[RMDB]
RNA sequence: GGGAACGACUCGAGUAGAGUCGAAAAGAUAUGGACAAGCUUCACUACGACUCAAAUGGAGACUCGGUACUCGGAAACGAGUACGAGUCUAUGAAGUUUGAGGUCGUAGUGAAGCUUGUCCUAAGUCCUAUCGUAGCUAGUUCGCUAGCUACGAUAGAAAAGAAACAACAACAACAAC
Reactivity to DMS in 0.01 (KOAc 150mM, MgCl2 10mM, bicine 150mM(pH8.5), 24C), signal-to-noise 2, nucleotides 027 to 126: g020a110u010a260u000g000g010a020c000a010a020g010c000u000u000c000a010c000u000a010c020g000a080c000u000c000a010a020a010u010g000g000a010g020a010c000u000c000g010g040u000a010c000u000c000g010g000a080a130a210c000g010a020g010u000a010c010g000a010g010u000c000u000a060u020g000a110a170g000u000u000u000g020a020g020g010u020c010g000u010a020g010u010g000a010a000g010c010u010u000g010u000c000c010u010a010a060g000u020c040